[RMDB]
RNA sequence: GGGAACGACUCGAGUAGAGUCGAAAAGUGAACCUUCUUCUUGAAGGCCUUCUGGACGGCGGUUCGAUUCCGCCCAGGUCCACCAGAAGCACAUUGCACGGGCAGUGCGCUUCUGAUGGGCCUGACCUAGCACACUGUUAUUCGUAACAGUGUGCUAAAAAGAAACAACAACAACAAC
Reactivity to 2A3 in 0.01 (KOAc 150mM, MgCl2 10mM, bicine 150mM(pH8.5), 24C), signal-to-noise 9, nucleotides 027 to 126: g110u100g070a110a130c000c000u010u010c010u190u040c060u100u300g010a000a010g010g000c000c010u120u070c050u070g090g040a040c020g000g000c000g000g010u040u060c040g030a020u040u010c000c000g000c000c000c000a000g000g000u010c000c000a010c000c000a000g000a000a000g000c000a000c000a010u000u010g010c060a090c300g100g300g000c010a010g000u000g000c010g000c000u000u010c000u000g000a020u000g000g000g000c000c000u000g000a000c000c000
Reactivity to DMS in 0.01 (KOAc 150mM, MgCl2 10mM, bicine 150mM(pH8.5), 24C), signal-to-noise 7, nucleotides 027 to 126: g000u010g010a100a160c010c000u000u000c000u010u040c220u020u020g000a010a010g000g010c090c060u000u010c040u010g010g010a120c160g000g000c010g000g000u000u010c130g010a300u010u010c000c010g000c000c010c000a000g000g000u000c000c000a000c040c000a000g010a000a000g010c010a030c000a010u000u000g010c020a230c300g020g010g000c000a010g010u000g010c050g010c000u000u000c000u000g000a040u000g010g000g000c000c000u000g000a050c060c060